[RMDB]
RNA sequence: GGGAACGACUCGAGUAGAGUCGAAAAUUGCGCAUAGCCUUCGGAAUACGGCUCGACCCACUGCGGGUGCCGCGCCACGUGCGCCUGCGUCGGCGUGUAGCGCCGAAGCGUUUCCAGGCCGAGCCCAGCUCCUUUUAGGGUUCGCCCUAAAAGGAGCAAAAGAAACAACAACAACAAC
Reactivity to DMS in 0.01 (KOAc 150mM, MgCl2 10mM, bicine 150mM(pH8.5), 24C), signal-to-noise 2, nucleotides 027 to 126: u000u010g020c080g030c120a100u000a080g000c050c040u000u000c070g020g030a160a080u010a170c150g020g030c040u010c030g010a040c020c010c050a110c220u010g020c000g000g020g010u000g050c050c050g040c110g000c070c070a060c040g020u000g020c050g070c020c080u000g000c010g020u010c080g020g020c000g000u000g000u000a090g000c020g020c000c000g010a010a060g030c020g010u000u000u010c030c030a130g000g010c000c020g000a070g010c000c000c070a130
Reactivity to 2A3 in 0.01 (KOAc 150mM, MgCl2 10mM, bicine 150mM(pH8.5), 24C), signal-to-noise 2, nucleotides 027 to 126: u040u040g010c020g010c010a030u090a090g040c000c010u060u110c070g010g030a150a090u130a110c040g050g000c010u000c020g040a040c000c000c030a070c140u250g030c050g010g010g010u010g080c100c010g060c010g050c010c000a070c020g090u070g020c030g050c000c010u090g010c040g030u000c070g000g010c030g010u070g100u160a060g050c030g020c010c000g030a050a010g000c000g040u030u040u020c020c000a020g000g020c000c010g010a000g000c000c000c010a000